[RMDB]
The data come from the RNA Mapping Database (RMDB), library M2RFPK. An RNA of 207 nucleotides, treated with 2A3 and DMS and read out base by base. The RNA was probed in 150 mM KOAc, 10 mM MgCl2 and 150 mM bicine (pH 8.5) at 24 C. For 2A3, 1,528 sequencing reads were counted.
RNA sequence: GGGAACGACUCGAGUAGAGUCGAAAACAGCAAAACGGAACCGAUUCCCACCAAGUUCGGAAAGAGAUACCGGGCGAGGCGCUGAAGAAAGAAUCUCGCUUCAGACACCCCAAGGACUCGACUGAAGAAUGCACGCCAUCGUUCGCGAUGGCGUGAAGUAUGUAUCUCGGUUCGCCGAGAUACAUACAAAAGAAACAACAACAACAAC
Reactivity to 2A3 in 0.01 (KOAc 150mM, MgCl2 10mM, bicine 150mM(pH8.5), 24C), signal-to-noise 3, nucleotides 027 to 156: c030a010g120c020a000a040a020a090c050g100g080a030a060c070c020g030a120u030u030c010c000c010a010c010c040a080a020g060u050u000c020g050g000a060a190a000g040a010g020a000u040a090c000c000g020g000g010c080g040a100g100g040c170g000c100u010g010a000a020g030a010a260a030g100a140a200u070c090u050c230g090c000u020u000c000a020g020a030c020a100c000c020c020c030a020a100g000g010a040c000u000c030g030a030c020u030g030a030a000g070a140a030u130g080c000a000c000g000c010c000a010u030c010g030u080u040c150g000c020g070a000u000g020g000c000g000u000g000a000a000
Reactivity to DMS in 0.01 (KOAc 150mM, MgCl2 10mM, bicine 150mM(pH8.5), 24C), signal-to-noise 1, nucleotides 027 to 156: c080a110g000c030a090a070a120a090c020g020g010a140a080c020c020g090a210u000u000c020c000c000a140c030c030a140a110g020u000u030c010g010g030a140a140a110g020a060g000a140u000a080c000c010g010g010g010c070g000a060g020g040c020g080c050u000g010a040a010g030a130a070a050g010a220a140u010c080u000c030g030c030u000u000c000a030g000a300c060a090c030c000c000c010a080a040g000g010a140c030u000c010g000a180c100u000g000a060a140g010a060a080u000g020c060a030c000g000c020c020a000u000c010g010u000u020c300g020c000g030a000u000g000g030c020g040u000g000a010a060